The record gives the reactivity of an RNA of 177 nucleotides to DMS and 2A3. For 2A3, 16,345 sequencing reads were counted.
RNA sequence: GGGAACGACUCGAGUAGAGUCGAAAACAAACACAACUUCAGCACUCUCUCUGCACCAUUACAAAACACCACCAAUGACAACACACAGAGCACAAUCACUGAAAAUGAGCAAACCAGUGCCCCCUCGUCCUUUAUACUCAUUCGUGAGUAUAAAGGAAAAAGAAACAACAACAACAAC
Reactivity to DMS in 0.01 (KOAc 150mM, MgCl2 10mM, bicine 150mM(pH8.5), 24C), signal-to-noise 7, nucleotides 027 to 126: c070a130a080a100c140a070c140a080a090c100u010u010c070a070g020c030a080c040u020c050u000c020u000c020u010g000c030a030c010c030a040u010u020a060c100a080a060a050a090c090a060c020c000a040c030c030a040a050u020g010a080c100a040a070c070a070c090a050c090a020g000a060g010c030a040c040a080a060u030c020a020c020u000g000a060a040a070a090u020g010a060g000c120a040a060a060c060c040a030g010u000g010c010c010c010c000c020u010c040g000
Reactivity to 2A3 in 0.01 (KOAc 150mM, MgCl2 10mM, bicine 150mM(pH8.5), 24C), signal-to-noise 9, nucleotides 027 to 126: c030a010a090a010c050a010c020a160a110c050u130u110c040a020g010c020a030c010u020c000u010c000u000c020u050g010c010a010c010c010a040u070u110a070c050a040a100a060a010c030a020c010c010a020c010c010a040a060u110g050a060c020a090a020c010a020c010a000c010a040g030a010g040c010a010c010a050a050u070c010a020c030u060g050a010a030a030a110u130g020a040g050c040a020a010a060c020c000a010g020u020g030c000c000c000c000c000u010c010g030
Background
Values cover nucleotides 27 to 126. It was measured as part of the RMDB library OK1LIB. DMS adducts were read by reverse transcription with MarathonRT.